[RMDB]
RNA sequence: GGGAACGACUCGAGUAGAGUCGAAAAGAGAAUUGAGUCUGUGGAAACAGAAAGAGUAGAGACUAUCUGCCAUCAACCUACCUGGUCAUUGUCCUCUGUGGUUGAACAAGGGGAGCCUGCCCAAGUACUGGAUUUUAUGAUUCGUCAUAAAAUCCAGAAAAGAAACAACAACAACAAC
Reactivity to DMS in 0.01 (KOAc 150mM, MgCl2 10mM, bicine 150mM(pH8.5), 24C), signal-to-noise 4, nucleotides 027 to 126: g010a100g030a100a130u000u020g010a090g010u010c000u000g020u000g000g030a120a160a060c040a030g000a070a090a100g000a110g020u000a050g010a080g010a140c100u000a090u000c050u000g010c040c030a070u000c050a040a050c060c020u000a060c060c040u000g010g010u000c070a070u000u000g010u000c010c010u000c030u010g020u000g010g020u010u010g020a110a070c090a060a070g000g000g020g000a070g020c080c070u000g010c050c020c010a070a090g020u010a110
Reactivity to 2A3 in 0.01 (KOAc 150mM, MgCl2 10mM, bicine 150mM(pH8.5), 24C), signal-to-noise 2, nucleotides 027 to 126: g060a000g030a100a120u160u120g010a040g020u000c010u030g020u070g080g120a190a000a000c010a040g080a030a160a030g070a030g020u090a010g000a000g040a070c050u050a050u060c030u020g030c020c000a050u050c010a000a040c030c020u060a070c000c030u010g000g020u090c050a080u030u200g070u070c020c000u000c020u060g080u060g070g120u090u150g020a070a050c000a110a060g020g000g020g000a020g030c010c000u030g010c000c020c000a040a010g080u110a100
Description:
An RNA of 177 nucleotides, treated with DMS and 2A3 and read out base by base. Conditions: 150 mM KOAc, 10 mM MgCl2 and 150 mM bicine (pH 8.5), 24 C.